[RMDB]
This 177-nucleotide RNA was probed chemically with 2A3 and DMS.

RNA sequence: GGGAACGACUCGAGUAGAGUCGAAAACGGCAUUGAAUAUGUAUCACUAUUAACGUCACCAGAUUGAAAUGUACCGGCUAGAUGAAGACUAUUUGAUCAGCUAGUUACUUCUAUCGAAUAAAGUGGCGUAUUAUCAACACUUCGGUGUUGAUAAUACAAAAGAAACAACAACAACAAC
Reactivity to 2A3 in 0.01 (KOAc 150mM, MgCl2 10mM, bicine 150mM(pH8.5), 24C), signal-to-noise 9, nucleotides 027 to 126: c020g040g010c030a030u050u140g140a150a060u180a050u190g050u060a080u150c040a030c140u090a100u220u170a180a020c030g000u000c010a010c020c010a020g010a020u010u030g040a050a040a060u170g010u040a010c020c010g010g000c020u050a080g020a020u030g050a040a030g070a100c050u080a170u220u050u100g070a030u010c010a000g000c000u030a060g010u030u020a010c000u010u000c010u010a020u010c010g040a080a090u130a150a130a020g010u010g010g000c010
Reactivity to DMS in 0.01 (KOAc 150mM, MgCl2 10mM, bicine 150mM(pH8.5), 24C), signal-to-noise 9, nucleotides 027 to 126: c100g010g010c050a030u000u010g020a120a100u020a030u010g010u000a090u010c070a110c130u020a080u020u020a090a090c040g010u000c000a010c010c090a110g010a040u000u000g000a020a030a060u010g010u010a020c030c040g010g000c010u000a050g010a020u000g000a020a040g000a150c260u020a110u010u000u000g000a030u000c010a040g000c010u000a050g020u000u000a030c040u000u000c010u000a030u000c010g010a090a090u020a060a070a120g010u000g000g000c030
About this RNA
2A3 adducts were read by reverse transcription with SuperScript II with manganese. The reactions ran in a buffer of 150 mM KOAc, 10 mM MgCl2 and 150 mM bicine (pH 8.5), at 24 C. It was measured as part of the RMDB libraries RFM100 and RFMREP.